[RMDB]
RNA sequence: GGGAACGACUCGAGUAGAGUCGAAAAGAGAUAAGAAGGGAAGGCGAAAGGGAGGUCUACAACGAAAGGACUCUCCUGUUGCGAUACGGGAAAAGAGAAGAGCUCUUCGUCGUCUGUCGAGAAUGUAAUUUUUCUGAUAUUCUCCCCUUGAACAGAGGGUAACAUGCCUAUUCGUAGGCAUGUUACCAAAAGAAACAACAACAACAAC
Reactivity to 2A3 in 0.01 (KOAc 150mM, MgCl2 10mM, bicine 150mM(pH8.5), 24C), signal-to-noise 2, nucleotides 027 to 156: g050a000g000a030u070a150a000g100a020a010g000g000g000a020a050g010g020c010g010a000a010a030g020g000g010a020g000g030u010c030u070a050c020a260a030c060g100a080a060a080g100g070a000c010u020c030u010c110c000u020g030u060u030g050c020g020a020u030a140c020g000g010g010a020a100a180a010g030a010g020a040a020g000a010g020c000u010c000u110u050c010g040u000c000g010u010c070u040g140u130c060g000a020g000a030a040u030g050u100a020a110u060u170u120u170u040c070u060g060a060u020a040u130u000c010u020c000c020c000c010u010u010g020a020a000c030a040g100a050g080
Reactivity to DMS in 0.01 (KOAc 150mM, MgCl2 10mM, bicine 150mM(pH8.5), 24C), signal-to-noise 1, nucleotides 027 to 156: g030a150g040a130u020a040a110g000a100a140g000g040g010a130a060g010g030c040g000a130a070a050g000g000g030a050g040g020u000c000u000a100c090a010a120c020g030a090a090a150g030g000a040c030u000c000u000c020c000u000g020u190u000g010c070g000a180u000a230c060g000g000g020a040a100a130a150g000a150g000a070a100g010a130g020c060u000c060u010u000c040g040u000c030g030u000c040u000g000u000c010g000a050g030a070a050u000g010u040a050a120u020u000u000u000u010c190u060g020a070u000a220u020u000c010u000c000c010c020c060u000u000g030a030a040c030a140g000a180g000
Description:
Structure probing data (2A3 and DMS) for a 207-nucleotide construct. For 2A3, 961 sequencing reads were counted. For DMS, 1,323 sequencing reads were counted. Values are in units of 0.01, from 0 to 300, in steps of 10. For DMS the reverse transcriptase was MarathonRT. The data come from the RNA Mapping Database (RMDB), library OK3TST.